[RMDB]
RNA sequence: GGGAACGACUCGAGUAGAGUCGAAAACUUGUCUUCUUCCUGUAGAUUCCGCAGCUCGUCUUCCUCCUGAGAAGUCAAUUGUUUGCCUUUGGCAUUCAGCUGCUUCUUCUUAUUCUCCAGAUCGCAUUUCCUUUUAUGUCGCUGCUUUUCUUCAGGCGUUCCUUGAAAACUUCGGUUUUCAAGGAACAAAAGAAACAACAACAACAAC
Reactivity to 2A3 in 0.01 (KOAc 150mM, MgCl2 10mM, bicine 150mM(pH8.5), 24C), signal-to-noise 2, nucleotides 027 to 156: c030u050u030g020u080c150u090u020c010u060u020c020c000u020g000u030a030g010a040u150u040c070c090g030c010a010g000c030u130c130g030u030c140u080u060c010c060u080c000c030u040g020a020g000a030a010g070u160c030a010a020u020u010g020u010u000u000g020c010c020u110u110u300g040g000c000a000u000u000c000a000g020c000u000g000c040u000u000c000u000u010c010u010u180a130u110u150c080u020c020c000a010g010a230u100c020g050c040a000u050u140u160c030c040u120u170u130u100a140u140g100u070c060g040c030u020g000c010u070u020u020u000c020u010u040c010a020g000g070c030
This 207-nucleotide RNA was probed chemically with 2A3. The reactions ran in a buffer of 150 mM KOAc, 10 mM MgCl2 and 150 mM bicine (pH 8.5), at 24 C.